Record summary: This 177-nucleotide RNA was probed chemically with 2A3 and DMS. For DMS, 3,025 sequencing reads were counted.
[RMDB]
RNA sequence: GGGAACGACUCGAGUAGAGUCGAAAAGAUAUGGAGACAGGACAUGCUAUCGUCCUCGGAAACGAGGAAUAGCAACAGCCUGUUCUCCUAAGUCAAAUCGCCUAUGCCCUUCGGGGCAUAGGCGAAACUUGACUUAGAUGUUCGCAUCUAAGUCAAGAAAAGAAACAACAACAACAAC
Reactivity to 2A3 in 0.01 (KOAc 150mM, MgCl2 10mM, bicine 150mM(pH8.5), 24C), signal-to-noise 2, nucleotides 027 to 126: g020a010u030a030u130g000g000a000g000a010c000a000g020g010a050c050a240u230g000c010u020a010u040c080g220u020c010c000u000c010g000g020a070a020a010c000g010a010g000g030a030a000u010a010g030c050a080a000c060a060g020c000c000u010g010u120u030c000u000c000c000u000a030a010g030u010c010a010a010a220u070c000g000c000c000u000a030u020g010c030c000c000u000u110c300g060g000g020g000c010a010u020a010g010g000c000g000a010a000a010
Reactivity to DMS in 0.01 (KOAc 150mM, MgCl2 10mM, bicine 150mM(pH8.5), 24C), signal-to-noise 2, nucleotides 027 to 126: g000a040u000a300u010g000g000a010g010a020c010a000g020g000a060c060a200u000g010c000u000a000u000c130g000u010c000c000u000c000g010g000a030a040a090c000g010a010g000g000a030a010u000a000g000c000a040a060c230a140g000c000c000u010g000u010u010c000u000c000c010u000a030a040g010u010c030a060a150a140u000c010g020c020c000u000a000u000g000c000c000c000u000u010c230g010g010g010g000c000a000u010a000g000g020c000g030a010a000a080
Overview:
As a SHAPE reagent, 2A3 marks flexible, mostly unpaired nucleotides at the ribose 2'-OH. It was measured as part of the RMDB library TTRDEL.